[RMDB]
RNA sequence: GGGAACGACUCGAGUAGAGUCGAAAAUUGUGGCUGCACAACUUCGUGGCUUAACGGCUUGCUGACCACGUAACGACCAUUGACCACAGAAACGGUUGGUGGCUUACGGGUUUGCUCAAAGUAGUCGGUCUGGCUAGUCGUUCGCGACUAGCCAGACAAAAGAAACAACAACAACAAC
Reactivity to 2A3 in 0.01 (KOAc 150mM, MgCl2 10mM, bicine 150mM(pH8.5), 24C), signal-to-noise 1, nucleotides 027 to 126: u120u110g040u080g130g000c050u120g000c050a000c030a240a230c090u130u090c040g040u030g050g000c030u090u060a110a000c000g020g000c010u030u090g030c000u000g000a010c000c010a300c060g000u000a060a000c060g220a270c010c000a010u000u030g010a010c000c000a080c100a180g300a140a160a000c080g000g010u000u010g050g000u010g010g010c000u000u000a000c000g000g000g020u000u000u050g010c000u000c040a150a150a020g020u050a000g030u090c020g020